[RMDB]
Chemical mapping of a 207-nucleotide RNA with 2A3 and DMS. DMS adducts were read by reverse transcription with MarathonRT. The DMS profile rests on 2,302 reads. It was measured as part of the RMDB library OK3TST. Values cover nucleotides 27 to 156. The reactions ran in a buffer of 150 mM KOAc, 10 mM MgCl2 and 150 mM bicine (pH 8.5), at 24 C.
RNA sequence: GGGAACGACUCGAGUAGAGUCGAAAACAGUGCCCCCAGUUGCAUAGCUCUGGGAGAUGACAUCCACCUUGAAUCUCCACAGUGGAACCUCUAGGGCUAUCACUUAGCGUCCACUGUGAUGUUACCACCUGCAGUUGCACAAGGGGCCCUGGAUGAACUAUAAUGACUGGUUCGCCAGUCAUUAUAGAAAAGAAACAACAACAACAAC
Reactivity to 2A3 in 0.01 (KOAc 150mM, MgCl2 10mM, bicine 150mM(pH8.5), 24C), signal-to-noise 2, nucleotides 027 to 156: c010a010g020u010g010c000c000c010c020c000a020g050u190u000g000c020a050u100a080g040c040u020c010u070g020g000g020a050g020a050u040g020a040c030a110u080c040c030a090c030c060u070u130g080a100a060u060c020u030c030c010a010c000a010g000u010g040g000a080a100c000c060u070c010u080a040g020g030g000c020u110a090u120c010a010c020u000u000a010g010c000g040u050c010c000a000c000u010g000u010g020a020u040g030u110u130a040c020c020a020c050c010u050g000c030a060g040u110u030g000c020a000c010a090a070g030g000g000g000c000c000c000u040g000g040a130u160g070a050a000
Reactivity to DMS in 0.01 (KOAc 150mM, MgCl2 10mM, bicine 150mM(pH8.5), 24C), signal-to-noise 1, nucleotides 027 to 156: c000a000g000u000g020c000c000c000c000c020a210g040u000u000g010c040a060u020a230g020c050u000c000u000g010g030g020a020g010a070u030g020a130c110a080u000c060c080a120c060c050u050u010g050a140a110u000c050u000c060c050a030c070a040g010u000g010g030a050a160c030c060u000c020u000a000g020g010g000c060u000a110u010c150a060c030u010u080a040g010c300g020u000c000c010a000c060u020g030u000g020a060u000g010u000u000a070c020c040a130c060c010u020g020c070a110g000u000u000g020c020a060c030a090a040g020g050g000g020c020c060c020u000g000g000a150u010g000a080a230